[RMDB]
RNA sequence: GGGAACGACUCGAGUAGAGUCGAAAAAAGCUAUCCUCCUGCCUCUGCCUCCCUAAGAGCUGGGAUUACAGGUGUGAGCUACCGCACCCAGCCGAUAAUUACUUUUACAUUAGUCUUCAGCAGGGAAGAAUGGGGAGGAUUUCGAUCCUCCCCAUUCAAAAGAAACAACAACAACAAC
Reactivity to DMS in 0.01 (KOAc 150mM, MgCl2 10mM, bicine 150mM(pH8.5), 24C), signal-to-noise 1, nucleotides 027 to 126: a060a080g010c060u000a070u000c040c030u000c000c030u020g000c040c010u000c010u010g000c010c070u000c010c020c010u020a080a050g010a090g000c010u000g020g000g010a130u020u020a070c150a140g040g010u000g000u000g000a090g000c110u000a030c050c030g000c270a060c010c000c010a000g000c010c010g000a070u000a060a090u010u010a030c110u010u010u000u000a070c090a040u000u000a060g000u000c040u000u000c030a080g010c040a030g010g020g000a050a070
Structure probing data (DMS) for a 177-nucleotide construct. Source: RMDB library OK2TRN, as collected in RNAgym. Reactivities are given for positions 27 through 126.